[RMDB]
RNA sequence: GGGAACGACUCGAGUAGAGUCGAAAAUGACCUCCGGCAAUCACAACUUCCUCCAACGACUUGUGAAGGUUGCUGAUGUUUUGUACCGUGACGGUUGCUUGGCACCUCGACACCUUCGUGAACUCCACGCCUUAGAUCCAUUCGUGGAUCUAAGGCGAAAAGAAACAACAACAACAAC
Reactivity to DMS in 0.01 (KOAc 150mM, MgCl2 10mM, bicine 150mM(pH8.5), 24C), signal-to-noise 1, nucleotides 027 to 126: u020g020a080c030c010u000c070c000g010g110c050a100a070u000c100a070c160a070a200c070u000u000c040c000u040c000c030a030a160c060g000a190c280u020u000g020u010g000a130a000g010g000u000u000g000c080u050g000a020u010g000u000u040u020u000g000u020a110c000c010g050u000g080a010c140g010g000u070u010g000c100u000u000g030g000c070a140c010c020u000c200g010a090c030a040c010c100u000u020c060g020u000g030a050a050c020u000c000c000a210
Reactivity to 2A3 in 0.01 (KOAc 150mM, MgCl2 10mM, bicine 150mM(pH8.5), 24C), signal-to-noise 4, nucleotides 027 to 126: u170g050a020c000c010u020c040c010g010g040c040a000a070u030c000a020c020a070a040c010u010u000c000c010u000c030c050a070a070c060g230a100c090u170u100g070u070g110a060a080g080g000u040u030g020c020u000g030a120u020g110u070u050u060u090g030u030a040c050c030g050u120g130a090c120g040g030u050u070g020c040u080u100g020g000c030a010c030c040u020c000g010a010c000a070c050c010u030u040c030g040u010g060a040a060c020u000c030c010a050
Source: RMDB library OK1LIB, as collected in RNAgym. Structure probing data (DMS and 2A3) for a 177-nucleotide construct. 2A3 adducts were read by reverse transcription with SuperScript II with manganese. In probing experiments dimethyl sulfate is read out at A N1 and C N3, which are open when not base-paired.